[RMDB]
RNA sequence: GGGAACGACUCGAGUAGAGUCGAAAAAAGUUUGGAAAAAUCAGGAGAACCUCUCGUAGCUGACCCUGAGGGCCUCAAGGACCGGAAGCUUUUCUCCUGAGAAGAAGGUCAGCAUGGCUCCACCGCCACUAAAUGGGACCUUCGGGUCCCAUUUAGUAAAAGAAACAACAACAACAAC
Reactivity to DMS in 0.01 (KOAc 150mM, MgCl2 10mM, bicine 150mM(pH8.5), 24C), signal-to-noise 1, nucleotides 027 to 126: a040a040g010u000u010u040g000g000a000a020a160a100a080u000c000a010g020g000a000g010a080a150c270c030u030c020u020c130g010u010a040g030c080u000g010a020c070c020c170u050g020a190g030g000g000c140c040u060c110a110a020g010g030a100c070c000g010g000a080a070g000c000u030u060u000u020c060u000c000c000u000g010a010g000a030a080g000a170a130g010g000u000c000a040g000c030a050u010g030g000c000u020c020c090a080c110c050g010c050c020
Reactivity to 2A3 in 0.01 (KOAc 150mM, MgCl2 10mM, bicine 150mM(pH8.5), 24C), signal-to-noise 1, nucleotides 027 to 126: a000a030g220u190u170u090g120g000a110a110a000a060a100u000c000a000g010g020a000g020a060a040c080c070u090c060u070c140g040u050a030g020c000u010g050a050c000c000c030u030g120a190g050g000g000c030c010u200c110a170a170g060g000a150c000c060g090g050a090a000g040c000u070u120u040u040c060u000c000c000u010g030a030g000a010a000g030a030a050g040g030u010c040a000g000c020a050u050g000g000c000u030c020c060a190c050c040g030c030c000

An RNA of 177 nucleotides, treated with DMS and 2A3 and read out base by base. 2A3 adducts were read by reverse transcription with SuperScript II with manganese. For DMS the reverse transcriptase was MarathonRT. It was measured as part of the RMDB library OK1LIB.